[RMDB]
RNA sequence: GGGAACGACUCGAGUAGAGUCGAAAAGAUAGAUUCGUCUAUCGGCUUUUCCUAAGUCUUUCCUCCGUGGACAUGUAUCGGGUGUCGGAAACGACAUCUCUAGCGUGUACAACAGCCACGGAUGAAAGAUAUGGAUAUGAAACAGCUUCGGCUGUAACAUUACACAGAAAUUCGUUUCUGUGUAAUGAAAAGAAACAACAACAACAAC
Reactivity to 2A3 in 0.01 (KOAc 150mM, MgCl2 10mM, bicine 150mM(pH8.5), 24C), signal-to-noise 8, nucleotides 027 to 156: g000a000u010a000g010a010u050u100c210g030u000c120u000a000u000c010g080g000c020u130u150u090u040c010c000u050a160a060g020u000c000u000u010u000c010c020u000c010c000g000u010g010g030a090c030a110u060g020u030a090u100c050g010g000g000u010g000u000c000g010g050a070a090a090c010g010a000c000a010u010c040u000c030u060a060g060c050g100u110g020u080a050c040a150a030c030a180g040c000c000a000c000g000g000a000u000g000a000a000a000g000a000u020a010u030g010g000a030u060a100u290g150a190a130a020c000a000g080c000u090u120c250g170g000c000u000g010u020a010a000
Reactivity to DMS in 0.01 (KOAc 150mM, MgCl2 10mM, bicine 150mM(pH8.5), 24C), signal-to-noise 4, nucleotides 027 to 156: g010a040u000a000g010a070u010u010c260g010u000c000u000a040u000c000g030g000c140u000u000u000u000c010c010u010a070a260g020u000c000u000u000u010c010c050u000c010c010g020u000g000g020a080c060a300u000g020u000a080u000c020g010g010g000u010g000u000c000g010g020a140a120a290c020g000a010c000a000u000c000u000c040u010a200g050c120g040u000g020u000a070c030a080a130c130a180g010c000c000a030c000g010g000a000u000g000a020a030a010g010a020u000a090u000g010g000a120u010a130u000g010a170a140a070c000a030g000c000u000u000c300g060g000c000u000g010u000a050a190
An RNA of 207 nucleotides, treated with 2A3 and DMS and read out base by base.
Reactivities are given for positions 27 through 156.
For DMS the reverse transcriptase was MarathonRT.
The 2A3 profile rests on 13,869 reads.